The record gives the reactivity of an RNA of 207 nucleotides to DMS and 2A3. For 2A3 the reverse transcriptase was SuperScript II with manganese. In probing experiments dimethyl sulfate is read out at A N1 and C N3, which are open when not base-paired.
RNA sequence: GGGAACGACUCGAGUAGAGUCGAAAAAGGCACACUUCUAUAUCAUUUUACAAACAGAGUGACUGAGAGGUUCUCCUCAGAGCUCUGUUAGUGAACGCAGAGCUUACAGGAGAAGCGUUGUAAGAACUGCGUUCAUAGUUCUGUGAAUGCUGUGCCACGUGUCAUGAAUGUUCGCAUUCAUGACACGAAAAGAAACAACAACAACAAC
Reactivity to DMS in 0.01 (KOAc 150mM, MgCl2 10mM, bicine 150mM(pH8.5), 24C), signal-to-noise 3, nucleotides 027 to 156: a050g000g040c030a010c020a030c030u000u000c030u000a210u010a080u020c050a110u010u000u000u010a250c070a220a110a050c040a020g010a030g030u010g010a230c010u010g000a020g010a130g070g030u000u010c020u000c050c010u000c000a070g010a300g000c020u010c010u000g000u000u000a060g040u000g000a020a040c110g000c030a010g000a120g000c020u010u000a020c030a030g020g010a120g040a080a110g010c050g010u010u000g030u000a030a040g010a030a120c000u000g030c000g030u000u000c030a040u000a050g010u000u000c090u020g020u000g000a020a090u020g020c070u000g030u000g010c000c000a070
Reactivity to 2A3 in 0.01 (KOAc 150mM, MgCl2 10mM, bicine 150mM(pH8.5), 24C), signal-to-noise 4, nucleotides 027 to 156: a000g000g010c000a000c000a000c010u060u050c050u070a170u100a090u190c080a110u080u090u150u250a110c070a050a010a010c020a000g020a010g050u060g230a300c010u010g010a010g010a040g070g080u240u070c080u030c060c010u000c000a000g000a000g010c000u000c000u000g000u000u010a010g000u000g000a010a000c000g010c000a000g010a010g030c000u000u000a000c000a000g020g120a170g130a130a030g110c030g080u090u010g000u010a000a000g010a050a040c000u010g000c000g000u000u010c000a000u010a020g040u080u030c000u080g080u030g040a020a020u070g010c080u010g020u000g000c000c000a010
It was measured as part of the RMDB library OK3TST.